[RMDB]
RNA sequence: GGGAACGACUCGAGUAGAGUCGAAAAAGAUGAUUACGAUCAUCAAGAGGCAGGGGCGAGGGGCUGCGGGGGGAGCCGGGCGGAGACUGCGGCUUUUGGUUUCGCUUUCUCUGUUUCCCCUCCCUAAUCGUGUUAUCUGGUUCGCCAGAUAACACGAAAAAGAAACAACAACAACAAC
Reactivity to 2A3 in 0.01 (KOAc 150mM, MgCl2 10mM, bicine 150mM(pH8.5), 24C), signal-to-noise 1, nucleotides 027 to 126: a000g020a000u010g000a010u020u070a030c300g030a040u020c000a000u030c000a000a000g110a020g060g050c180a080g000g000g000g100c080g040a090g040g050g020g000c130u150g020c110g000g000g000g000g000g000a000g040c040c000g060g000g000c010g010g000a020g000a000c010u030g020c030g000g000c090u180u120u050u210g130g050u030u060u070c010g010c000u000u040u010c000u000c000u000g020u040u080u050c000c000c000c000u020c010c010c020u050a100a130
Conditions: 150 mM KOAc, 10 mM MgCl2 and 150 mM bicine (pH 8.5), 24 C. Chemical mapping of a 177-nucleotide RNA with 2A3. 2A3 adducts were read by reverse transcription with SuperScript II with manganese.